[RMDB]
RNA sequence: GGGAACGACUCGAGUAGAGUCGAAAAUGUGAGUGUCGUUUGCAACGAGCAUUUACUGUCAUUGUGUUUUGAGUAUAUGUUGAGGUGUUGUCUUGCUAUUCGCUGUGCAUUUAUGCGUUUAUUAAUGUGUGAGUUUACGCGUUGUUUCAAUGGACUUAAUCAUCCCUUUCUUCGGAAAGGGAUGAUUAAAAGAAACAACAACAACAAC
Reactivity to 2A3 in 0.01 (KOAc 150mM, MgCl2 10mM, bicine 150mM(pH8.5), 24C), signal-to-noise 1, nucleotides 027 to 156: u230g030u010g000a030g050u070g060u010c020g030u040u060u170g160c010a070a090c020g040a000g050c010a010u080u090u050a030c040u050g050u090c140a130u160u000g010u000g010u040u120u100u100g120a120g000u000a090u010a020u150g050u090u020g020a050g070g010u000g000u040u070g000u040c020u030u000g010c080u050a100u090u050c040g000c040u000g020u010g060c000a050u000u020u120a120u270g000c000g030u010u160u000a070u120u070a140a090u100g050u000g020u050g030a100g090u010u040u070a100c150g000c050g040u040u000g000u020u000u000c070a120a070u150g000g040a060c000u000u000

The record gives the reactivity of an RNA of 207 nucleotides to 2A3.
The RNA was probed in 150 mM KOAc, 10 mM MgCl2 and 150 mM bicine (pH 8.5) at 24 C.